[RMDB]
RNA sequence: GGGAACGACUCGAGUAGAGUCGAAAAAAGACAAUAAGUGUAUAGCCAUGAGGACCGACACUGAAAACUAUUAUCUCACUGUGGCUCGAGGACUCUGAGAAUGAUGGAGAAGUUUCCAGAAGAUCAAGAGGAUCAAAACCAUUUACAUAAUGAUAUAACCUCAUAGUCAGUUCGCUGACUAUGAGGUAAAAGAAACAACAACAACAAC
Reactivity to DMS in 0.01 (KOAc 150mM, MgCl2 10mM, bicine 150mM(pH8.5), 24C), signal-to-noise 2, nucleotides 027 to 156: a030a020g000a020c040a080a050u000a030a030g010u000g050u000a050u020a090g010c010c000a150u010g020a220g030g010a070c100c020g010a070c020a080c000u000g000a070a080a110a120c090u000a070u010u000a080u000c030u010c030a090c040u010g020u000g020g050c020u000c030g010a110g020g020a120c050u000c010u050g010a090g020a230a130u000g000a140u000g000g020a140g010a040a250g000u010u000u000c020c000a090g000a110a190g000a070u000c020a020a090g010a110g020g010a120u010c030a030a090a060a050c020c000a050u000u000u000a100c090a060u000a060a080u000g000a090u000a080u000a130
Reactivity to 2A3 in 0.01 (KOAc 150mM, MgCl2 10mM, bicine 150mM(pH8.5), 24C), signal-to-noise 3, nucleotides 027 to 156: a010a000g070a020c070a020a050u120a170a020g000u010g040u080a070u090a120g020c020c020a060u080g090a140g050g010a060c050c040g010a010c010a000c060u040g020a030a070a040a000c030u070a110u240u040a080u100c040u030c020a060c060u080g010u020g140g000c020u030c050g010a010g040g050a040c010u000c040u110g050a070g010a120a070u080g030a030u090g040g010a030g010a120a070g040u080u100u000c000c010a000g030a060a000g000a010u040c030a020a070g030a030g150g000a030u070c030a020a020a020a120c020c000a010u060u100u150a060c060a060u170a090a050u130g030a070u140a000u170a190
Chemical mapping of a 207-nucleotide RNA with DMS and 2A3. DMS adducts were read by reverse transcription with MarathonRT. It was measured as part of the RMDB library OK3TST. 2A3 is a SHAPE reagent: it acylates the 2'-hydroxyl of flexible nucleotides of all four kinds.